Record summary:
Chemical mapping of a 177-nucleotide RNA with DMS and 2A3. Values are in units of 0.01, from 0 to 300, in steps of 10. 2A3 adducts were read by reverse transcription with SuperScript II with manganese. The 2A3 profile rests on 2,977 reads. DMS adducts were read by reverse transcription with MarathonRT. It was measured as part of the RMDB library M2PK90. The RNA was probed in 150 mM KOAc, 10 mM MgCl2 and 150 mM bicine (pH 8.5) at 24 C.
[RMDB]
RNA sequence: GGGAACGACUCGAGUAGAGUCGAAAAAAAAUGAGUGCGUGGUACCACAAACCAGACCAAUCUUCGGCACAUGGUCGCACAAGUACAGCUUCGCCUGUACAAAGCGAACAACAACAACAACAAGCAACACUGAUAUCUUCUUCGGAAGAUAUCAGUGAAAAGAAACAACAACAACAAC
Reactivity to DMS in 0.01 (KOAc 150mM, MgCl2 10mM, bicine 150mM(pH8.5), 24C), signal-to-noise 3, nucleotides 027 to 126: a040a000a030a080u000g000a110g010u000g000c060g010u000g000g010u000a030c040c030a080c190a050a050a090c050c040a050g010a150c020c040a100a050u010c100u010u010c080g030g000c100a030c140a080u000g000g010u000c020g040c020a020c180a090a210g010u000a000c000a000g020c070u010u010c220g010c180c000u000g010u010a000c030a030a100a140g000c010g010a000a020c010a020a060c040a010a030c000a030a000c070a040a010c060a110a120g000c270a070a170
Reactivity to 2A3 in 0.01 (KOAc 150mM, MgCl2 10mM, bicine 150mM(pH8.5), 24C), signal-to-noise 2, nucleotides 027 to 126: a000a000a000a070u140g020a020g010u020g000c040g020u050g010g020u050a080c010c030a040c070a040a100a010c010c030a020g040a040c020c000a040a090u070c090u130u080c070g130g000c030a010c020a090u040g050g000u020c010g000c010a050c010a110a030g010u000a000c010a010g000c030u120u150c110g050c030c000u000g000u020a000c010a030a070a010g020c050g040a010a000c020a000a000c000a000a000c000a000a000c000a010a010c010a000a030g120c020a070a000